The data come from the RNA Mapping Database (RMDB), library 15KREP. The record gives the reactivity of an RNA of 177 nucleotides to DMS. Reactivities are given for positions 27 through 126.
[RMDB]
RNA sequence: GGGAACGACUCGAGUAGAGUCGAAAACCCGGGGAUCGGUGAAUCGUCCCGGAAUGGGGACUCCGAGGGCCCCUUCCGAAGUGACGGGGGGGGGUCACUAGGAACACUGGGGUCCAGUGGAUCCGUGCUAUAAGGAUCACUUCGGUGAUCCUUAUAGAAAAGAAACAACAACAACAAC
Reactivity to DMS in 0.01 (KOAc 150mM, MgCl2 10mM, bicine 150mM(pH8.5), 24C), signal-to-noise 1, nucleotides 027 to 126: c000c000c030g020g000g000g030a110u000c030g020g020u010g010a130a090u000c080g000u000c010c010c010g020g010a110a090u030g010g000g000g000a030c070u000c040c030g010a120g000g010g000c020c010c000c010u000u000c000c020g000a170a220g020u000g000a030c080g000g000g000g000g000g000g000g000g000u010c000a000c040u020a260g000g000a050a050c250a060c130u000g010g010g030g010u010c020c000a060g000u010g000g000a060u010c000c030g000u000g010